[RMDB]
RNA sequence: GGGAACGACUCGAGUAGAGUCGAAAAAUGACUGACUUUUGCAUUUUCAGCUUCAAAUCCAAGCAUCCACCAUAUCACUUGGACUCAGGAGUAAGCCCUAGGGAAACUUACAAGAGUUCCGUUUUAUCCACAGAAUGCUAUGAUAUAGCCAAACUCACGAUUUACCCAUCUUCGGAUGGGUAAAUCGAAAAGAAACAACAACAACAAC
Reactivity to 2A3 in 0.01 (KOAc 150mM, MgCl2 10mM, bicine 150mM(pH8.5), 24C), signal-to-noise 2, nucleotides 027 to 156: a010u040g040a030c040u040g030a040c020u080u080u030u080g040c040a100u000u040u030u040c030a010g000c000u080u030c070a090a050a040u000c020c020a000a020g010c000a050u100c030c000a100c070c010a150u080a050u280c070a080c110u070u110g010g010a010c000u010c060a060g010g030a050g050u030a030a000g030c000c030c000u000a010g050g030g000a010a060a070c000u030u040a070c020a070a140g010a000g050u020u030c010c000g000u050u000u030u030a060u030c010c030a040c010a040g110a140a070u060g030c000u020a030u100g100a110u130a040u080a130g010c000c000a070a020a020c060u070c060a050

Chemical mapping of a 207-nucleotide RNA with 2A3. Source: RMDB library OK3TST, as collected in RNAgym. Values cover nucleotides 27 to 156. The reactions ran in a buffer of 150 mM KOAc, 10 mM MgCl2 and 150 mM bicine (pH 8.5), at 24 C.